[RMDB]
Chemical mapping of a 177-nucleotide RNA with DMS and 2A3. The 2A3 profile rests on 18,571 reads. Reactivities are given for positions 27 through 126. 2A3 adducts were read by reverse transcription with SuperScript II with manganese. The DMS profile rests on 12,310 reads. The RNA was probed in 150 mM KOAc, 10 mM MgCl2 and 150 mM bicine (pH 8.5) at 24 C. It was measured as part of the RMDB library OK2TRN.
RNA sequence: GGGAACGACUCGAGUAGAGUCGAAAAGACGUUGGCUCGUAUCUGAACAGUCAGAUUAGCUGUUUAGAUGACACAAGGCAACUUGUGUUACGAAUAGAGUAAAUCUGGCUCUGUGCCGACGUCGCCACUAGUGCUUUCUAUUCGUAGAAAGCACUAGAAAAGAAACAACAACAACAAC
Reactivity to DMS in 0.01 (KOAc 150mM, MgCl2 10mM, bicine 150mM(pH8.5), 24C), signal-to-noise 6, nucleotides 027 to 126: g000a020c000g020u000u000g010g010c000u000c040g010u010a090u010c170u010g010a080a070c180a020g010u000c010a040g000a050u000u000a110g010c000u000g000u000u000u000a090g000a260u000g010a010c000a010c000a000a010g000g010c300a110a130c010u000u010g010u000g000u000u000a020c020g000a010a020u000a010g000a050g010u000a000a030a020u000c030u000g000g000c000u000c090u010g000u000g010c000c000g010a000c010g010u000c010g000c020c010a170
Reactivity to 2A3 in 0.01 (KOAc 150mM, MgCl2 10mM, bicine 150mM(pH8.5), 24C), signal-to-noise 5, nucleotides 027 to 126: g000a000c000g000u000u000g000g000c000u010c040g060u080a150u070c130u110g060a070a010c000a020g010u010c000a000g000a040u020u030a020g010c000u000g020u020u010u020a080g010a120u030g000a000c000a000c000a010a000g010g000c020a060a050c020u000u000g000u000g000u010u010a010c010g010a000a010u020a010g050a010g130u110a000a010a020u000c000u010g010g000c000u010c030u050g040u020g010c000c000g000a000c000g000u000c000g000c000c000a010